Description:
The record gives the reactivity of an RNA of 177 nucleotides to 2A3 and DMS. Conditions: 150 mM KOAc, 10 mM MgCl2 and 150 mM bicine (pH 8.5), 24 C. Values are in units of 0.01, from 0 to 300, in steps of 10. For 2A3, 1,052 sequencing reads were counted. For 2A3 the reverse transcriptase was SuperScript II with manganese. Source: RMDB library OK1LIB, as collected in RNAgym.
RNA sequence: GGGAACGACUCGAGUAGAGUCGAAAAGAAGAUAAGAGACAAGACACCGUGGGCAGAUGACAAGAAAGUCCGUCGGUGACGGUAAGGUCGUCAGUCACAGGCGACCGUUUUCUGUGACUCUAAAGAAAGUCGGGUCAUUAUUCGUAAUGACCCGACUAAAAGAAACAACAACAACAAC
Reactivity to 2A3 in 0.01 (KOAc 150mM, MgCl2 10mM, bicine 150mM(pH8.5), 24C), signal-to-noise 1, nucleotides 027 to 126: g110a030a030g000a030u190a200a030g030a000g000a010c050a100a050g090a000c000a000c020c020g050u000g040g000g000c030a020g030a280u170g020a110c000a030a200g090a020a020a000g040u000c000c020g030u100c010g010g000u000g000a010c020g000g070u080a040a040g010g000u000c000g000u000c010a000g130u040c120a020c040a080g000g000c040g000a000c050c020g010u050u040u020u000c010u030g070u010g010a020c010u000c000u050a150a040a000g050a050a130
Reactivity to DMS in 0.01 (KOAc 150mM, MgCl2 10mM, bicine 150mM(pH8.5), 24C), signal-to-noise 3, nucleotides 027 to 126: g000a050a060g000a110u040a150a000g010a050g010a080c100a080a100g000a160c010a010c040c010g100u020g000g000g010c000a050g050a100u060g000a150c300a190a080g020a060a160a070g000u000c000c000g000u000c030g030g020u000g020a060c010g020g020u020a080a040g000g010u030c020g020u030c000a090g020u000c300a100c250a040g010g000c000g000a030c000c030g000u000u000u000u000c040u000g000u010g070a230c040u010c000u000a100a060a080g000a070a070